[RMDB]
Structure probing data (2A3 and DMS) for a 207-nucleotide construct. For DMS the reverse transcriptase was MarathonRT. 2A3 adducts were read by reverse transcription with SuperScript II with manganese. The RNA was probed in 150 mM KOAc, 10 mM MgCl2 and 150 mM bicine (pH 8.5) at 24 C. It was measured as part of the RMDB library OK3TST.
RNA sequence: GGGAACGACUCGAGUAGAGUCGAAAAGGUUUUCCCCAAGUGGCAAGAUUUGUGGACAGGGAUGGCACUGUGAUCUAAAGCCAGUCUGCACUGACUUUCCUGAGUGCCCCAGCUCAUGCCAGGGUGGGAUUCAACUCCAUUGGUUCUAAGGAGUGAAUGAUUACGUAUUAUUCGUAAUACGUAAUCAAAAAGAAACAACAACAACAAC
Reactivity to 2A3 in 0.01 (KOAc 150mM, MgCl2 10mM, bicine 150mM(pH8.5), 24C), signal-to-noise 9, nucleotides 027 to 156: g110g010u050u020u050u070c030c000c000c000a090a030g120u030g020g000c010a050a050g030a140u070u110u080g060u060g010g020a040c030a050g060g010g040a060u050g050g020c010a010c050u040g050u120g090a120u080c090u290a090a050a010g030c020c000a010g030u030c080u100g030c080a040c090u050g050a070c000u080u060u040c010c030u050g050a060g070u080g050c010c000c000c000a020g000c010u010c020a040u060g010c010c010a010g030g000g020u220g010g000g010a010u030u060c060a070a060c010u010c010c010a090u050u150g130g020u270u050c060u120a100a110g010g000a010g020u020g020a030a070
Reactivity to DMS in 0.01 (KOAc 150mM, MgCl2 10mM, bicine 150mM(pH8.5), 24C), signal-to-noise 5, nucleotides 027 to 156: g030g010u010u000u000u010c010c010c000c050a130a150g030u000g020g040c010a090a110g020a150u000u000u000g030u010g040g020a090c050a130g020g000g010a120u010g030g010c000a050c020u010g030u010g010a090u010c040u010a060a040a040g020c000c020a030g020u000c060u000g010c210a170c020u000g010a020c020u000u000u010c040c020u010g010a050g020u000g000c010c000c010c010a110g000c020u000c020a130u000g020c030c030a100g000g020g040u010g000g000g000a150u000u000c050a090a070c010u000c000c010a250u000u000g000g000u000u000c080u000a120a130g010g010a060g030u000g010a090a150